[RMDB]
RNA sequence: GGGAACGACUCGAGUAGAGUCGAAAACAACUUCACUUCGGUGAAGUUGAAAAAGCGUACUACUGAGUGGGCAAGGAAUGCGUCCCAAAUAGGACGUGCAUUCUGAUGACCCGUAACAUCUCAGUAUCGCAAAAACUAACCCGUUCGCGGGUUAGAACACCAAUAAUACGUUCGCGUAUUAUUGGUGAAAAGAAACAACAACAACAAC
Reactivity to 2A3 in 0.01 (KOAc 150mM, MgCl2 10mM, bicine 150mM(pH8.5), 24C), signal-to-noise 5, nucleotides 027 to 156: c000a000a000c000u000u010c000a020c020u050u080c160g050g000u010g000a010a000g000u000u010g030a020a000a010a000a000g020c010g040u110a050c040u000a000c000u040g010a000g020u170g010g000g010c050a050a030g000g000a010a000u000g000c010g020u020c040c020c010a120a300a150u290a070g000g000a010c050g060u190g060c030a000u010u000c000u000g020a060u250g060a090c000c010c000g000u020a040a050c030a260u150c010u010c010a010g000u020a020u300c020g000c030a070a090a010a030a000c000u000a000a010c000c010c000g000u030u010c300g000c010g050g000g000u010u000a010g000a010a010
Reactivity to DMS in 0.01 (KOAc 150mM, MgCl2 10mM, bicine 150mM(pH8.5), 24C), signal-to-noise 3, nucleotides 027 to 156: c010a000a010c010u000u000c010a000c000u000u000c280g060g030u000g000a000a020g010u000u000g000a050a100a020a110a150g000c020g010u000a100c140u010a020c000u000g010a050g020u000g010g010g000c010a300a300g000g000a020a020u010g010c020g030u020c000c000c010a030a140a160u000a030g000g000a030c010g020u000g000c000a010u000u000c000u000g030a110u010g010a250c010c010c010g020u000a050a080c110a130u000c010u000c010a030g020u000a010u000c040g030c010a050a020a090a090a140c010u000a000a010c000c000c000g020u000u000c300g030c040g020g010g010u000u000a000g000a110a240

The data come from the RNA Mapping Database (RMDB), library RNAMAK. Structure probing data (2A3 and DMS) for a 207-nucleotide construct. As a SHAPE reagent, 2A3 marks flexible, mostly unpaired nucleotides at the ribose 2'-OH. 2A3 adducts were read by reverse transcription with SuperScript II with manganese. For DMS the reverse transcriptase was MarathonRT.